An RNA of 207 nucleotides, treated with 2A3 and read out base by base. The reactions ran in a buffer of 150 mM KOAc, 10 mM MgCl2 and 150 mM bicine (pH 8.5), at 24 C. The 2A3 profile rests on 302 reads. 2A3 adducts were read by reverse transcription with SuperScript II with manganese.
[RMDB]
RNA sequence: GGGAACGACUCGAGUAGAGUCGAAAAGAUAGUUUUCACAUCAGCUUUGCCCGUUGGACGUAAAUCAACUGGAAAACCUUUUUAUUUCUACCCCAGCUUUCUGAAUAUGAAGUUACAACUUAACUGGGGCUGGGGAAGCAGGCACCUCUGGUGAGGGCUCGAGAACUAAGUUCGCUUAGUUCUCGAGAAAAGAAACAACAACAACAAC
Reactivity to 2A3 in 0.01 (KOAc 150mM, MgCl2 10mM, bicine 150mM(pH8.5), 24C), signal-to-noise 1, nucleotides 027 to 156: g080a090u230a080g000u020u120u140u080c080a060c020a160u060c020a020g020c000u010u050u150g050c000c050c050g060u020u030g030g080a030c060g030u140a010a010a010u030c000a060a080c050u060g000g000a000a020a080a170c050c030u070u120u070u070u000a200u140u170u020c050u080a080c000c000c000c000a020g000c000u020u300u300c090u140g080a140a110u250a200u160g060a020a020g130u110u140a030c020a100a090c130u050u050a000a080c030u050g020g020g010g010c000u000g000g000g000g000a010a010g000c030a020g070g010c000a020c020c000u000c000u080g000g000u080g050a090g030g000g020